[RMDB]
RNA sequence: GGGAACGACUCGAGUAGAGUCGAAAAAAUCAACAGAUUUGAAACAGACUCACAGGCAGAGAUUGAGGUAAUCAAGAAAGCAGCCUUGAAUGCUGGCGCAUCUCAUGCCGUUACUUCUAAUCACUGGAAUAUAUACUCCUUUCGAGGAGUAUAUAUUAAAAGAAACAACAACAACAAC
Reactivity to 2A3 in 0.01 (KOAc 150mM, MgCl2 10mM, bicine 150mM(pH8.5), 24C), signal-to-noise 6, nucleotides 027 to 126: a000a000u110c050a030a120c040a090g060a070u040u070u100g090a100a060a040c080a040g100a110c030u040c080a070c040a090g060g000c020a010g000a010g020a040u070u100g020a040g030g030u060a040a080u060c020a030a060g080a130a120a040g120c070a020g050c030c000u050u080g070a150a070u120g010c030u040g090g070c070g000c030a030u000c010u010c050a090u060g010c000c000g000u010u040a010c000u020u010c020u080a020a030u020c020a030c100u040g030g030
Reactivity to DMS in 0.01 (KOAc 150mM, MgCl2 10mM, bicine 150mM(pH8.5), 24C), signal-to-noise 9, nucleotides 027 to 126: a020a020u010c020a130a120c190a120g000a030u000u000u010g010a100a120a130c170a140g000a140c070u010c060a080c170a120g010g010c020a030g000a050g010a020u000u000g000a110g000g010u010a020a020u010c060a060a070g010a070a070a090g010c070a060g010c040c050u020u030g010a070a070u020g000c040u010g010g020c150g010c070a040u010c090u010c100a060u010g010c080c060g010u010u010a030c040u000u010c020u030a040a050u000c030a070c040u000g000g010